An RNA of 177 nucleotides, treated with 2A3 and DMS and read out base by base. For DMS the reverse transcriptase was MarathonRT. The 2A3 profile rests on 2,508 reads.
RNA sequence: GGGAACGACUCGAGUAGAGUCGAAAAUGAACAGGACCAUGUUUGCUGAUCCUGGGCUAACCGUCCACUCCCUCAUUCAGUCUCUCACCUCCUGAACCGAGCAAGGGAAGCUCUGGGCAGGGCCUGCCCAAGGGGGCAUGUUCGCAUGCCCCCUUGGAAAAGAAACAACAACAACAAC
Reactivity to 2A3 in 0.01 (KOAc 150mM, MgCl2 10mM, bicine 150mM(pH8.5), 24C), signal-to-noise 1, nucleotides 027 to 126: u070g000a040a010c020a020g040g000a030c050c020a050u120g070u130u140u200g040c060u050g040a070u050c030c020u000g020g000g000c010u020a060a020c040c010g050u020c010c020a030c070u020c020c020c020u040c000a020u100u000c030a010g060u000c000u000c000u020c060a100c050c010u060c010c010u010g010a050a030c030c020g000a010g000c020a090a020g120g020g050a040a040g000c010u000c030u100g000g000g010c010a000g000g020g000c010c040u070g010c010
Reactivity to DMS in 0.01 (KOAc 150mM, MgCl2 10mM, bicine 150mM(pH8.5), 24C), signal-to-noise 3, nucleotides 027 to 126: u010g010a090a100c030a040g020g000a070c020c010a060u000g000u000u000u000g010c160u000g000a040u000c020c020u000g000g000g030c010u000a090a130c100c050g000u000c030c060a090c070u000c030c020c010u000c070a110u000u010c060a060g010u000c050u000c010u000c040a090c070c040u000c000c030u000g000a080a080c060c080g000a060g010c050a080a110g030g000g010a140a090g010c060u010c020u000g010g000g010c030a050g000g000g010c080c040u000g020c180

About this RNA: It was measured as part of the RMDB library OK2TST.